Structure probing data (2A3 and DMS) for a 177-nucleotide construct. The data come from the RNA Mapping Database (RMDB), library OK2TST. The 2A3 profile rests on 982 reads. The reactions ran in a buffer of 150 mM KOAc, 10 mM MgCl2 and 150 mM bicine (pH 8.5), at 24 C.
RNA sequence: GGGAACGACUCGAGUAGAGUCGAAAAAUAAACCAGGAAGACAAGUGUUUAAUCAAAUUCGUGGAUUAUCACCAUGGCCAGUUGCUUAUACAACUAUGGAUGACACUAACUUGAAAAUAUACGAUGCGCACUAUAACAACUUCGGUUGUUAUAGUGCAAAAGAAACAACAACAACAAC
Reactivity to 2A3 in 0.01 (KOAc 150mM, MgCl2 10mM, bicine 150mM(pH8.5), 24C), signal-to-noise 2, nucleotides 027 to 126: a000u070a000a020a070c030c010a060g100g090a040a030g050a050c030a080a110g040u000g030u130u090u130a070a080u100c030a000a110a100u100u080c040g030u010g010g030a090u100u130a090u300c000a000c040c000a060u060g030g000c040c020a030g020u040u030g010c090u250u120a090u070a240c010a020a000c010u020a080u140g080g040a060u020g000a020c010a000c000u000a080a000c010u010u080g100a080a050a050a030u270a010u080a080c050g080a050u120g040c040
Reactivity to DMS in 0.01 (KOAc 150mM, MgCl2 10mM, bicine 150mM(pH8.5), 24C), signal-to-noise 2, nucleotides 027 to 126: a080u000a080a030a210c020c030a110g000g000a090a030g000a100c120a090a070g030u000g000u000u000u010a130a130u000c040a030a060a090u000u020c080g050u010g030g010a050u000u000a070u010c110a150c000c050a020u000g000g070c110c110a150g030u000u000g000c100u000u000a130u000a110c020a050a070c010u000a050u000g000g000a090u010g010a090c040a040c030u010a040a020c060u000u000g000a030a020a050a090u000a090u000a110c140g010a090u000g000c250
2A3 adducts were read by reverse transcription with SuperScript II with manganese.